[RMDB]
RNA sequence: GGGAACGACUCGAGUAGAGUCGAAAAACGCGCAUAAGCCUCAUAUAAUACGCUAAAGUUAGCACUUUCAACUAAAUCUAGGCCCAUUUUACGCGCCAUCGAGAUAAUAUUUUUAAUAUUACAUAAUGGCUCGGCCUUCAUUUCGCCACUCAUCGGCGAACGUAACCUAAUUCGUUAGGUUACGUUCAAAAGAAACAACAACAACAAC
Reactivity to 2A3 in 0.01 (KOAc 150mM, MgCl2 10mM, bicine 150mM(pH8.5), 24C), signal-to-noise 5, nucleotides 027 to 156: a000c050g020c010g000c030a050u060a220a050g020c000c010u020c040a020u160a020u080a280a130u110a070c070g000c030u040a070a070a130g140u120u090a060g060c040a040c080u060u170u110c080a120a070c060u120a070a070a050u020c040u050a010g020g000c000c030c010a050u070u110u100u150a040c050g030c000g000c020c000a020u050c030g100a110g030a170u010a030a010u000a040u010u120u020u070u220a110a070u030a020u020u050a020c010a010u300a170a030u110g010g000c010u020c060g040g010c000c010u050u030c040a060u080u100u100c030g010c020c030a060c050u190c030a120u140c150g000g000c030
Reactivity to DMS in 0.01 (KOAc 150mM, MgCl2 10mM, bicine 150mM(pH8.5), 24C), signal-to-noise 2, nucleotides 027 to 156: a050c060g010c030g070c030a060u000a110a160g020c010c050u000c040a130u020a080u000a080a140u000a060c050g010c020u000a080a070a160g020u000u000a090g000c030a100c100u020u000u010c030a070a130c070u000a020a050a050u000c030u010a020g040g000c000c010c050a150u000u000u000u000a060c080g020c110g010c000c000a010u000c010g010a260g000a210u010a010a020u010a010u000u000u000u000u020a030a050u000a000u000u000a010c010a180u000a050a070u010g010g030c020u010c040g000g030c000c010u020u000c030a050u000u010u000c030g000c010c030a060c090u000c050a110u000c050g020g010c040
Conditions: 150 mM KOAc, 10 mM MgCl2 and 150 mM bicine (pH 8.5), 24 C. An RNA of 207 nucleotides, treated with 2A3 and DMS and read out base by base. The 2A3 profile rests on 2,586 reads. Values cover nucleotides 27 to 156.